An RNA of 177 nucleotides, treated with DMS and 2A3 and read out base by base. Conditions: 150 mM KOAc, 10 mM MgCl2 and 150 mM bicine (pH 8.5), 24 C. For DMS the reverse transcriptase was MarathonRT. The data come from the RNA Mapping Database (RMDB), libraries RFM100 and RFMREP. Values cover nucleotides 27 to 126.

RNA sequence: GGGAACGACUCGAGUAGAGUCGAAAAACGGUGGCUAUUACGAUAGCCACCGAAGUACAGUGAUGACAUUCUUAGGACACCUUUGGAGGUUAUGACUAAUGAAAAGAAAACAUGUUCUGAGUACUAAUACAUGGAGAUGGUUCGCCAUCUCCAUGUAAAAAGAAACAACAACAACAAC
Reactivity to DMS in 0.01 (KOAc 150mM, MgCl2 10mM, bicine 150mM(pH8.5), 24C), signal-to-noise 3, nucleotides 027 to 126: a110c010g000g000u010g000g000c010u020a010u000u040a120c230g020a060u000a010g010c010c000a010c010c000g010a020a000g010u000a060c090a080g020u010g030a050u000g010a080c110a030u000u000c020u000u000a050g000g010a160c200a070c060c000u000u010u040g000g000a070g010g010u010u020a050u000g000a140c050u000a030a030u020g000a060a030a060a040g000a080a040a090a100c150a080u010g000u010u010c070u000g010a180g000u010a030c120u000a080a170
Reactivity to 2A3 in 0.01 (KOAc 150mM, MgCl2 10mM, bicine 150mM(pH8.5), 24C), signal-to-noise 3, nucleotides 027 to 126: a010c000g000g010u000g000g000c000u010a010u020u060a050c190g120a020u020a000g010c000c000a000c000c000g000a010a000g000u000a010c030a030g030u030g070a030u020g030a010c020a050u030u000c010u020u030a040g020g070a070c020a150c060c000u080u160u210g190g110a060g020g030u070u070a040u130g130a020c030u050a080a030u140g020a000a030a030a090g150a010a100a040a000c050a070u060g030u040u050c030u030g070a030g040u030a010c000u040a010a150